[RMDB]
RNA sequence: GGGAACGACUCGAGUAGAGUCGAAAAGAGGGGUACCACCAGACGUGGAGUCUGCGGCUCAAUCUGACUCAACGCGCGCACCUCACCAGGCCCGGACGCGCGGAGGACCGACAGCCGGGCGCGCUUUCGGAGUUGUCAGGUUCGCCUGACAACUCCGAAAAGAAACAACAACAACAAC
Reactivity to 2A3 in 0.01 (KOAc 150mM, MgCl2 10mM, bicine 150mM(pH8.5), 24C), signal-to-noise 1, nucleotides 027 to 126: g000a000g010g060g020g010u090a120c040c040a030c000c000a010g010a120c010g060u060g120g040a020g000u000c050u050g070c100g030g010c000u010c060a070a090u010c040u050g010a000c030u030c050a000a050c030g000c000g010c000g010c010a080c010c000u000c000a010c030c040a010g000g020c000c000c000g030g000a050c060g100c000g000c000g040g010a070g000g070a130c020c030g040a040c010a000g020c000c000g000g030g000c040g000c000g000c020u010u050u000